The data come from the RNA Mapping Database (RMDB), library M2RFPK. Chemical mapping of a 207-nucleotide RNA with DMS and 2A3. The reactions ran in a buffer of 150 mM KOAc, 10 mM MgCl2 and 150 mM bicine (pH 8.5), at 24 C. For DMS, 2,609 sequencing reads were counted.

RNA sequence: GGGAACGACUCGAGUAGAGUCGAAAAUGAGACAAACACGCUUCACAAUGUGCGGCAAAGAAACAUUGUUUAUGCAUAGGCACUUCGCAAUGUGUGCUCAAACAUUGCUUAUUCAAACACGCUUCACAAAAGAAUCAGUGGUUCGCCACUGAUUCAACAGUAUAUUCCCGUUCGCGGGAAUAUACUGAAAAGAAACAACAACAACAAC
Reactivity to DMS in 0.01 (KOAc 150mM, MgCl2 10mM, bicine 150mM(pH8.5), 24C), signal-to-noise 2, nucleotides 027 to 156: u000g000a150g000a120c070a140a110a100c110a040c030g020c000u000u000c020a010c030a040a010u000g030u040g060c000g020g050c010a100a060a050g100a050a020a030c010a040u000u000g010u000u010u000a090u000g000c010a210u000a130g030g030c060a030c030u000u000c210g040c130a140a080u000g060u000g020u010g010c020u010c030a190a090a060c010a070u000u000g000c020u010u000a040u000u000c050a120a080a180c080a100c150g060c010u030u000c000a160c100a090a110a070a160g000a020a000u000c000a000g050u010g020g020u010u000c300g010c000c000a030c000u000g010a010u000u010c000a030a060
Reactivity to 2A3 in 0.01 (KOAc 150mM, MgCl2 10mM, bicine 150mM(pH8.5), 24C), signal-to-noise 8, nucleotides 027 to 156: u190g020a030g030a050c060a020a170a010c070a010c060g000c000u010u010c010a020c000a010a010u000g000u010g000c010g050g040c070a080a080a090g080a010a050a000c010a010u010u010g100u040u080u130a110u130g040c040a050u050a150g170g010c000a000c020u030u010c030g010c010a000a010u010g020u000g030u020g020c070u110c180a040a050a000c010a000u000u020g000c010u060u090a160u110u140c100a060a100a020c050a030c110g110c070u140u130c100a060c050a110a070a040a040g010a000a010u000c000a000g000u010g020g020u020u030c140g050c030c000a000c000u000g000a000u000u000c000a000a000